Structure probing data (2A3 and DMS) for a 177-nucleotide construct. The data come from the RNA Mapping Database (RMDB), library TTRDEL. 2A3 adducts were read by reverse transcription with SuperScript II with manganese. Conditions: 150 mM KOAc, 10 mM MgCl2 and 150 mM bicine (pH 8.5), 24 C. In probing experiments dimethyl sulfate is read out at A N1 and C N3, which are open when not base-paired. For DMS the reverse transcriptase was MarathonRT.
[RMDB]
RNA sequence: GGGAACGACUCGAGUAGAGUCGAAAAGAUAUGGACAUAUCAGCGAGCUGUGUCGGAAACGACCCAGCGAUGAGCUGUAAGUGUCCUAAGUCAAACCGUAUGUCUAGCUUCGGCUAGACAUACGGAACAAUGUAAAUUGCUUCGGCAAUUUACAUUGAAAAGAAACAACAACAACAAC
Reactivity to 2A3 in 0.01 (KOAc 150mM, MgCl2 10mM, bicine 150mM(pH8.5), 24C), signal-to-noise 6, nucleotides 027 to 126: g030a010u040a030u110g000g000a000c000a000u060a020u150c000a020g020c040g150a010g000c010u000g000u010g000u010c000g020g020a060a030a030c010g000a010c000c070c010a000g010c030g020a120u130g090a040g000c010u010g030u100a250a200g030u010g000u000c000c000u010a060a010g040u010c070a090a040a090c010c000g000u000a000u000g000u000c000u000a020g020c010u060u070c300g130g000c000u000a000g020a000c000a000u000a000c000g000g000a000a000
Reactivity to DMS in 0.01 (KOAc 150mM, MgCl2 10mM, bicine 150mM(pH8.5), 24C), signal-to-noise 7, nucleotides 027 to 126: g010a030u000a260u010g010g010a010c000a020u010a300u000c010a010g020c010g020a220g010c010u000g010u000g000u000c000g020g010a050a060a140c000g010a020c010c040c000a000g010c000g010a070u010g010a200g010c000u000g000u000a070a190g010u000g000u000c000c000u010a020a090g000u000c040a110a110a220c000c000g000u000a000u000g000u000c000u000a000g010c000u000u010c240g030g000c000u000a000g010a000c000a000u000a010c010g000g000a030a060